[RMDB]
RNA sequence: GGGAACGACUCGAGUAGAGUCGAAAACCCCGGGCGUGUGAACAGCUCUGUCCCCGGCCGUGCGUGCAGCCGCCGGGCAUGUGAGCAGCUCUGUCCCCGGCAGUGUGUGCAGCCCCCGGGUGUGUGACUUGUGUUUGUUUUUCGAAACAAACACAAGAAAAGAAACAACAACAACAAC
Reactivity to DMS in 0.01 (KOAc 150mM, MgCl2 10mM, bicine 150mM(pH8.5), 24C), signal-to-noise 3, nucleotides 027 to 126: c050c000c000c030g020g000g030c170g020u010g010u000g000a110a060c060a120g000c000u000c010u010g000u000c170c010c010c040g000g010c070c130g050u010g040c010g020u010g010c250a150g010c000c040g010c020c010g000g010g010c090a010u000g010u010g010a040g010c050a250g000c020u000c010u000g000u010c050c020c030c070g020g010c020a030g010u000g000u000g020u000g000c090a180g000c020c020c010c000c000g020g000g020u010g000u000g000u000g010a150
Reactivity to 2A3 in 0.01 (KOAc 150mM, MgCl2 10mM, bicine 150mM(pH8.5), 24C), signal-to-noise 1, nucleotides 027 to 126: c010c010c000c000g000g000g000c080g000u220g050u050g150a090a000c020a020g000c000u000c010u050g040u050c000c020c000c010g050g100c140c060g140u250g050c000g040u270g130c070a020g010c030c020g000c020c000g020g020g000c010a010u150g030u050g050a000g010c000a010g010c000u000c010u030g080u090c050c050c020c010g070g000c010a020g040u000g000u020g040u100g140c100a020g050c000c000c000c040c000g030g020g040u080g030u030g040u060g070a050